[RMDB]
The record gives the reactivity of an RNA of 177 nucleotides to DMS and 2A3. 2A3 adducts were read by reverse transcription with SuperScript II with manganese. The RNA was probed in 150 mM KOAc, 10 mM MgCl2 and 150 mM bicine (pH 8.5) at 24 C.
RNA sequence: GGGAACGACUCGAGUAGAGUCGAAAAUGAUUUAGUACGCAUAUGCAAUGAAUUUUCGGAUGUGUAUUUUUUUGUUUUGAGGAGGAGGAUUCAUGGAGUGCAGCAGCUGUUUGUAGCGGUCAUGUGGAGUAAUACUCCGUUUCGACGGAGUAUUACUAAAAGAAACAACAACAACAAC
Reactivity to DMS in 0.01 (KOAc 150mM, MgCl2 10mM, bicine 150mM(pH8.5), 24C), signal-to-noise 4, nucleotides 027 to 126: u010g010a040u010u010u010a030g020u000a010c030g020c010a010u000a070u010g020c130a070a030u020g020a120a080u010u010u010u000c040g020g010a030u000g010u010g000u000a000u000u000u000u010u000u010u000g000u000u000u010u010g010a100g010g010a060g010g000a080g000g000a070u010u010c050a080u010g010g000a070g020u000g000c040a040g010c060a100g000c040u000g010u000u020u010g020u020a040g000c050g010g000u000c050a030u000g000u000g020g010
Reactivity to 2A3 in 0.01 (KOAc 150mM, MgCl2 10mM, bicine 150mM(pH8.5), 24C), signal-to-noise 6, nucleotides 027 to 126: u060g020a010u010u030u120a010g000u010a010c010g000c040a010u060a020u100g050c110a060a070u120g150a210a150u190u060u060u090c060g060g020a010u010g010u010g010u010a040u000u010u000u010u000u010u020g060u010u060u020u060g060a050g010g020a030g020g010a020g020g010a020u070u090c030a050u100g040g030a060g030u060g010c020a030g000c020a010g000c040u040g040u100u120u090g040u080a020g030c030g040g000u020c030a040u080g050u060g100g060